[RMDB]
RNA sequence: GGGAACGACUCGAGUAGAGUCGAAAAGAAUCACCGUACCUAUUUAGGUUUACGCUCCAAGAUCGGUGGAUAGCAGCCCUAUCAAUAUCUAGGAGAACUGUGCUAUGUUUAGAAGAUUAGAUAGUCUAUUACACAGCCAUGUUCGCAUGGCUGUGAACCAUAUCUAUAACUUCGGUUAUAGAUAUGGAAAAGAAACAACAACAACAAC
Reactivity to 2A3 in 0.01 (KOAc 150mM, MgCl2 10mM, bicine 150mM(pH8.5), 24C), signal-to-noise 6, nucleotides 027 to 156: g050a030a070u120c000a000c010c000g000u020a020c000c010u050a130u260u240u300a040g000g000u000u030u050a030c030g000c010u000c010c000a020a010g010a060u060c020g010g030u030g030g060a030u070a020g070c090a030g010c030c000c000u040a060u110c040a070a070u030a030u170c030u030a020g010g010a030g020a020a040c070u070g010u020g090c030u080a020u130g070u040u080u030a150g020a200a030g020a150u140u100a030g020a100u080a020g040u010c040u040a130u070u110a060c010a000c000a000g000c000c000a000u000g020u020u040c090g010c110a000u010g000g000c000u000g000u000g000a000a010
Reactivity to DMS in 0.01 (KOAc 150mM, MgCl2 10mM, bicine 150mM(pH8.5), 24C), signal-to-noise 3, nucleotides 027 to 156: g000a120a110u010c010a120c030c000g010u000a070c010c000u000a210u010u010u010a020g010g020u010u010u000a080c070g000c020u010c000c020a100a110g020a020u000c030g010g040u000g030g010a080u000a060g020c060a170g000c080c080c000u000a090u010c040a100a130u010a070u000c040u010a140g010g000a110g010a090a060c050u000g020u000g000c040u000a070u000g010u000u000u000a060g010a110a110g010a130u000u000a130g000a150u010a070g020u000c030u010a110u010u000a160c020a000c010a000g000c000c010a000u010g020u000u010c290g020c030a030u000g010g010c000u000g020u000g000a020a100

Chemical mapping of a 207-nucleotide RNA with 2A3 and DMS.
It was measured as part of the RMDB library M2RFPK.
The DMS profile rests on 6,006 reads.
DMS adducts were read by reverse transcription with MarathonRT.
Reactivities are given for positions 27 through 156.
The 2A3 profile rests on 4,779 reads.
2A3 adducts were read by reverse transcription with SuperScript II with manganese.
DMS (dimethyl sulfate) methylates the pairing face of unpaired adenines and cytosines.
Conditions: 150 mM KOAc, 10 mM MgCl2 and 150 mM bicine (pH 8.5), 24 C.